[RMDB]
Notes:
An RNA of 177 nucleotides, treated with 2A3 and DMS and read out base by base.
RNA sequence: GGGAACGACUCGAGUAGAGUCGAAAAUUUUUAAGUUACACAUCCAUUUGCUUUAUUAGUGAUUAUGUCUAGUCCAUGUUAACUUGAAAAAUGAGACUAUAAUGAGACAUUUUAUUUAGGCUGCUACCAAGGACGUAAUUUUCGAAUUACGUCCUUGAAAAGAAACAACAACAACAAC
Reactivity to 2A3 in 0.01 (KOAc 150mM, MgCl2 10mM, bicine 150mM(pH8.5), 24C), signal-to-noise 2, nucleotides 027 to 126: u040u040u010u020u030a050a000g000u010u040a060c040a000c000a160u060c030c050a070u130u050u130g000c010u050u150u170a130u100u140a180g040u020g180a070u040u200a020u100g090u020c060u080a050g060u030c030c000a000u040g030u040u070a050a070c010u050u030g130a060a020a010a020a020u110g000a080g010a040c000u030a040u030a190a170u100g000a010g030a060c010a020u040u160u040u000a050u000u080u000a030g020g000c030u080g030c010u060a030c050
Reactivity to DMS in 0.01 (KOAc 150mM, MgCl2 10mM, bicine 150mM(pH8.5), 24C), signal-to-noise 4, nucleotides 027 to 126: u000u000u000u000u000a020a060g000u000u000a050c160a060c060a060u000c080c060a090u000u010u010g010c030u000u000u010a100u000u000a060g000u000g000a090u000u000a050u000g010u000c090u010a040g010u010c060c060a040u000g010u000u000a030a070c040u000u000g010a020a020a020a060a060u000g010a210g000a040c020u010a050u010a050a070u010g010a080g000a110c060a040u010u000u010u000a060u010u010u000a070g000g010c050u000g010c080u010a090c150

The DMS profile rests on 4,728 reads. Source: RMDB library OK2TRN, as collected in RNAgym. The RNA was probed in 150 mM KOAc, 10 mM MgCl2 and 150 mM bicine (pH 8.5) at 24 C.